[RMDB]
RNA sequence: GGGAACGACUCGAGUAGAGUCGAAAAGGUCGGAGCUUCGGCUCCGACCAAAGCAGGAAUACCAAAUCCCAGCAAGCAGCAGCAGCAAGCAAGCAGCAAGCAAAACCAUUACGUUCGCGUAAUGGAAGGUAUAAACAGGGUUCGCCCUGUUUAUACCAAAAGAAACAACAACAACAAC
Reactivity to DMS in 0.01 (KOAc 150mM, MgCl2 10mM, bicine 150mM(pH8.5), 24C), signal-to-noise 2, nucleotides 027 to 126: g000g020u000c000g040g000a000g020c000u000u000c200g040g000c000u000c000c010g020a010c000c010a000a000a100g000c100a050g010g020a040a110u010a090c050c020a070a050a080u000c000c010c020a150g020c040a050a080g020c020a020g020c010a050g010c030a080g020c060a010a100g000c070a020a050g030c110a060g010c030a040a100g020c150a030a060a160a190c000c000a000u000u000a020c000g010u000u000c230g020c020g010u000a010a000u000g010g010a050a020
Reactivity to 2A3 in 0.01 (KOAc 150mM, MgCl2 10mM, bicine 150mM(pH8.5), 24C), signal-to-noise 1, nucleotides 027 to 126: g010g000u020c030g000g040a000g030c050u120u180c290g060g000c000u080c010c000g000a000c010c000a000a000a010g000c020a020g000g080a070a030u040a140c020c000a000a060a090u020c000c000c010a000g010c020a070a000g000c020a000g000c010a000g010c010a000g010c010a060a010g010c010a070a000g000c000a020g050c040a060a040g040c020a030a040a000a140c000c000a000u010u000a000c000g030u030u040c300g020c020g100u010a000a020u000g000g000a010a040
Conditions: 150 mM KOAc, 10 mM MgCl2 and 150 mM bicine (pH 8.5), 24 C. An RNA of 177 nucleotides, treated with DMS and 2A3 and read out base by base. It was measured as part of the RMDB library M2PK50. For DMS, 1,019 sequencing reads were counted.